[RMDB]
RNA sequence: GGGAACGACUCGAGUAGAGUCGAAAAACUACGCAAAUUUAAUGAAAAAUCAAAAACAAACUUUACUAUGUACCAUGUCACUCGUGCACGCGCCGCGAACAGGCGUAGUCUUCACUAUGAUUGUGAACUGUGUCUGUAAAUUCGUUUACAGACACAGAAAAGAAACAACAACAACAAC
Reactivity to DMS in 0.01 (KOAc 150mM, MgCl2 10mM, bicine 150mM(pH8.5), 24C), signal-to-noise 4, nucleotides 027 to 126: a060c010u000a030c060g010c020a100a110a080u020u020u050a080a110u020g000a030a060a040a080a030u060c120a070a040a070a090a060c110a080a060a090c100u010u010u000a040c050u030a050u010g000u010a050c030c030a070u010g010u010c070a080c010u000c040g020u010g010c060a050c050g010c050g000c040c030g030c070g020a050a050c130a050g000g010c000g020u000a020g010u030c040u000u000c030a030c020u000a050u020g030a070u030u010g010u010g000a050a140
Reactivity to 2A3 in 0.01 (KOAc 150mM, MgCl2 10mM, bicine 150mM(pH8.5), 24C), signal-to-noise 9, nucleotides 027 to 126: a000c030u100a030c050g010c060a030a100a140u110u160u170a210a200u200g140a080a060a040a060a060u160c100a040a070a090a060a060c080a110a140a030c030u140u200u120a060c030u080a070u150g020u040a060c020c030a100u090g040u060c020a010c040u020c050g050u040g030c040a020c090g060c010g010c020c020g010c030g040a040a020c030a060g020g060c010g000u000a000g010u000c060u010u010c010a050c050u080a080u260g140a220u130u150g020u010g040a030a020